[RMDB]
RNA sequence: GGGAACGACUCGAGUAGAGUCGAAAAAAUUUAGUAGAUUGGGGCUUUUCUUUCUACACGUUAGCAUUUAUUAGAAAGCUACAGGCAUUGAGACAGUGAAAUGUUGGUUUUGGCAUUGACAAACUGACCACAGUUUGAAAUUCGUUUCAAACUGUGGAAAAGAAACAACAACAACAAC
Reactivity to DMS in 0.01 (KOAc 150mM, MgCl2 10mM, bicine 150mM(pH8.5), 24C), signal-to-noise 2, nucleotides 027 to 126: a050a090u000u000u010a060g000u000a040g000a070u000u000g050g020g000g020c120u000u020u010u010c020u010u010u010c030u000a060c060a090c190g030u000u000a040g030c040a080u000u000u000a120u020u010a100g010a080a030a090g000c030u000a030c040a060g000g010c040a050u010u000g000a080g010a060c110a060g000u000g000a080a040a080u000g010u010u010g000g000u000u010u000u020g000g000c050a060u010u000g010a060c110a030a040a070c080u030g010a230